[RMDB]
RNA sequence: GGGAACGACUCGAGUAGAGUCGAAAAACAAGGGCUUCCGGAUCCCUUCACGGCCACUCGAUACCAUUCGUUGACAAUUCUGCCUAAGUCGCUGCCAGCGGUGCUGAGGGUCACGGCCCGCACUAGCUGGCCGCCGGGUAUUCGUACCCGGCGGCCAAAAAGAAACAACAACAACAAC
Reactivity to 2A3 in 0.01 (KOAc 150mM, MgCl2 10mM, bicine 150mM(pH8.5), 24C), signal-to-noise 1, nucleotides 027 to 126: a010c090a020a050g000g000g000c070u170u010c140c010g140g100a120u120c030c000c000u000u000c000a020c040g000g000c010c010a230c000u000c000g100a050u100a220c000c090a100u080u060c010g000u090u090g140a110c100a180a230u010u010c000u080g000c000c020u090a130a030g000u050c020g000c080u010g050c000c000a050g000c000g030g040u010g000c010u070g080a250g080g000g000u000c000a050c230g010g000c000c000c000g040c000a010c000u010a070g020c000
Source: RMDB library OK1LIB, as collected in RNAgym. Structure probing data (2A3) for a 177-nucleotide construct. For 2A3, 383 sequencing reads were counted. Conditions: 150 mM KOAc, 10 mM MgCl2 and 150 mM bicine (pH 8.5), 24 C.